[RMDB]
RNA sequence: GGGAACGACUCGAGUAGAGUCGAAAACAACAGCCUGGGUUAAAUAUGCACUUUCAUGGUGCUUUUAAUUUCAGGAACUUAUAGCUUGAGACAGGGACGGGGUAAUUUUAUUUGGUAGCGAGAGGUGCAAUUUUAAUUCGUUCGCGAAUUAAAAUUGAAAAGAAACAACAACAACAAC
Reactivity to DMS in 0.01 (KOAc 150mM, MgCl2 10mM, bicine 150mM(pH8.5), 24C), signal-to-noise 1, nucleotides 027 to 126: c090a070a190c080a100g010c000c000u000g000g010g000u000u000a000a010a060u020a030u000g030c000a000c010u000u030u000c300a130u000g020g040u000g000c000u000u000u000u000a010a000u000u000u000c010a000g020g000a070a130c140u010u000a090u000a100g000c080u000u010g010a110g000a090c120a080g000g000g000a030c140g010g010g030g000u010a020a060u020u010u000u000a060u000u020u010g010g010u010a050g030c070g020a060g000a030g000g020u000g010